[RMDB]
Structure probing data (DMS and 2A3) for a 177-nucleotide construct. The DMS profile rests on 1,888 reads. Values are in units of 0.01, from 0 to 300, in steps of 10.
RNA sequence: GGGAACGACUCGAGUAGAGUCGAAAAAAUGUCGAGUAUUUUUGCGAUGCAUGGUAAAGAAAUCAAGGUGACCAGGUUUCUUUUCAAUUUUCCCCCAUAAUUGAAGAGUUACAAUGCCAUCUGACAAGUCAAAAACAUCGUUCGCGAUGUUUUUGACAAAAGAAACAACAACAACAAC
Reactivity to DMS in 0.01 (KOAc 150mM, MgCl2 10mM, bicine 150mM(pH8.5), 24C), signal-to-noise 1, nucleotides 027 to 126: a000a000u000g000u000c100g000a230g000u010a000u000u010u000u000u000g020c010g010a040u000g010c070a100u000g000g000u000a110a050a000g000a030a000a050u010c030a040a040g030g000u010g010a070c030c020a110g020g000u030u050u000c000u020u000u000u000c010a000a000u000u000u010u050c020c000c000c010c010a130u020a030a000u000u000g020a010a000g010a040g000u000u000a020c000a040a100u020g030c020c030a040u000c000u000g000a110c150a040a070
Reactivity to 2A3 in 0.01 (KOAc 150mM, MgCl2 10mM, bicine 150mM(pH8.5), 24C), signal-to-noise 2, nucleotides 027 to 126: a000a000u070g030u010c020g010a000g030u010a090u040u010u000u000u030g060c020g020a000u030g060c070a060u040g020g060u260a090a100a000g010a000a040a030u090c030a040a020g060g010u060g070a120c010c010a000g070g020u000u050u000c000u010u020u000u020c000a020a030u010u000u030u160c000c000c000c000c000a020u030a030a020u050u010g010a000a010g020a000g020u020u010a030c050a030a020u080g050c050c030a050u010c050u010g060a060c020a190a070